[RMDB]
RNA sequence: GGGAACGACUCGAGUAGAGUCGAAAACCAUCCCAAGUUGGAAGUGUCUGGCGCGGAUUAGGCGAAAGCCUGGACCUCUCUAGGCCUGAAGCGGUAGGCACGGCGUGAGGCUGGUUUAACAGAGCAGCGAUCACUGCCCGCUUUCAACGGUGGGAGGGGUUAGUGCUAUCUUCGGAUAGCACUAACCAAAAGAAACAACAACAACAAC
Reactivity to 2A3 in 0.01 (KOAc 150mM, MgCl2 10mM, bicine 150mM(pH8.5), 24C), signal-to-noise 1, nucleotides 027 to 156: c000c000a110u020c000c000c000a030a070g000u000u000g010g030a010a010g000u020g060u030c020u050g020g080c030g010c070g100g050a130u130u060a100g060g000c070g010a060a040a000g000c010c000u010g000g070a120c010c000u060c000u100c060u020a300g020g000c000c030u000g020a000a000g050c010g130g280u040a010g000g040c000a000c090g000g010c020g000u050g000a060g000g070c010u020g000g220u120u130u060a120a030c150a050g040a030g120c000a000g010c000g020a190u020c000a000c050u060g000c000c000c000g040c000u000u000u010c000a000a000c010g040g160u010g010g020g000a000g030g090